[RMDB]
RNA sequence: GGGAACGACUCGAGUAGAGUCGAAAAAGCAAUUGUGAAUGGGAGUUCACUCAUGAUUUGGCUCUCUGUUUGUCUGUUAUUGGUGUAUAAGAAUGCUUGUGAUUUUUGCCCAUUGAUUUUGUAUCCUGAGACUUUGCUGAAGUUGCUUAUCAGCUUACGAUCCACAUAGAUUCGUCUAUGUGGAUCGAAAAGAAACAACAACAACAAC
Reactivity to DMS in 0.01 (KOAc 150mM, MgCl2 10mM, bicine 150mM(pH8.5), 24C), signal-to-noise 3, nucleotides 027 to 156: a080g020c040a050a070u010u010g020u000g030a040a040u010g020g030g010a160g020u000u010c020a030c030u000c050a090u000g010a130u010u010u000g010g010c020u010c020u020c020u000g010u000u000u010g010u010c030u000g010u000u000a090u000u000g010g000u000g000u000a090u000a040a110g000a080a070u000g000c070u000u000g010u000g000a090u000u000u000u000u010g010c010c020c030a150u000u010g000a130u010u000u000u000g010u010a070u000c000c020u010g010a160g000a070c080u010u000u000g030c010u020g010a040a300g010u000u000g030c020u000u000a120u010c120a070g020c030u000u000a180
Reactivity to 2A3 in 0.01 (KOAc 150mM, MgCl2 10mM, bicine 150mM(pH8.5), 24C), signal-to-noise 2, nucleotides 027 to 156: a000g050c030a040a030u100u070g010u040g040a070a040u080g020g040g050a040g010u100u100c040a010c020u060c020a090u130g160a180u040u040u070g060g000c000u000c010u000c000u050g080u050u090u050g040u000c040u010g070u110u050a070u120u050g030g000u040g020u060a070u040a230a090g070a070a030u030g010c010u090u030g030u040g090a110u050u060u030u100u120g080c000c010c040a040u020u060g050a110u040u060u080u070g020u030a040u030c000c010u040g010a000g030a050c000u110u080u110g010c010u010g010a040a020g040u090u040g000c000u030u040a070u090c020a000g000c000u000u010a030
This 207-nucleotide RNA was probed chemically with DMS and 2A3. For 2A3 the reverse transcriptase was SuperScript II with manganese.